[RMDB]
RNA sequence: GGGAACGACUCGAGUAGAGUCGAAAAGAUAUGGAAAUAUGUUAGCGAAGAACAUACUGGGUCGGAAACGACCUUAUGGGAGCUAACUGUAUUUCCUAAGUCAAAUCUAUCCGUUCGCGGAUAGAAACGAUUCUUAAUGCUUCGGCAUUAAGAAUCGAAAAGAAACAACAACAACAAC
Reactivity to 2A3 in 0.01 (KOAc 150mM, MgCl2 10mM, bicine 150mM(pH8.5), 24C), signal-to-noise 1, nucleotides 027 to 126: g010a000u000a010u070g000g020a000a010a010u020a020u050g010u020u000a000g010c060g300a300a010g050a060a000c010a010u010a040c130u120g030g020g000u000c010g020g000a010a020a010c010g010a000c000c000u020u000a000u010g000g000g000a020g000c010u000a000a000c040u010g000u020a020u000u000u000c000c000u000a020a000g020u000c020a000a040a240u000c000u010a010u000c010c010g040u070u080c300g000c010g070g000a010u010a000g000a030a050a000
Reactivity to DMS in 0.01 (KOAc 150mM, MgCl2 10mM, bicine 150mM(pH8.5), 24C), signal-to-noise 2, nucleotides 027 to 126: g000a030u000a110u020g000g000a000a000a000u000a010u000g010u000u000a000g020c000g000a080a160g000a190a210c020a000u010a020c300u020g010g000g000u000c000g010g000a030a040a060c000g030a030c000c000u010u020a010u000g000g000g030a040g010c000u010a000a000c000u020g020u000a010u000u010u000c000c000u010a000a090g000u000c020a100a100a130u000c000u000a000u000c010c000g030u010u010c270g040c020g000g000a020u000a000g000a030a060a160

This 177-nucleotide RNA was probed chemically with 2A3 and DMS. Conditions: 150 mM KOAc, 10 mM MgCl2 and 150 mM bicine (pH 8.5), 24 C.